[RMDB]
RNA sequence: GGGAACGACUCGAGUAGAGUCGAAAAGUGGCACAGUUCGCUGUGCCACAAAGGACUACCCGUGAGGGUUAAGGCCAUACGGACAGCCGGGUCCACUGCCGAAAAUCCGUAGCUUCGGCUACGGAAACAUACUUGCAGAGUUCGCUCUGCAAGUAUGAAAAGAAACAACAACAACAAC
Reactivity to DMS in 0.01 (KOAc 150mM, MgCl2 10mM, bicine 150mM(pH8.5), 24C), signal-to-noise 6, nucleotides 027 to 126: g010u000g000g020c010a010c000a010g020u000u010c220g020c000u000g020u000g010c000c000a010c000a020a090a090g000g010a030c010u000a040c010c000c000g010u010g000a150g000g020g000u000u000a040a050g010g020c000c010a070u000a090c030g000g000a020c010a130g000c000c000g010g000g010u000c010c000a170c160u000g000c000c010g010a300a050a090a110u000c000c000g010u000a000g010c000u000u010c200g020g010c000u000a000c000g000g000a020a030a100
Reactivity to 2A3 in 0.01 (KOAc 150mM, MgCl2 10mM, bicine 150mM(pH8.5), 24C), signal-to-noise 4, nucleotides 027 to 126: g000u000g000g010c000a010c000a010g020u060u080c160g050c130u000g000u010g010c000c000a000c000a010a000a000g000g000a010c000u010a010c000c010c010g030u060g030a060g040g060g000u070u210a150a220g020g000c010c000a030u050a060c010g010g010a010c010a010g010c010c000g020g000g000u000c000c010a010c030u030g010c010c000g020a100a010a000a020u010c010c000g000u000a000g000c010u030u040c230g090g000c000u000a000c000g000g000a000a000a010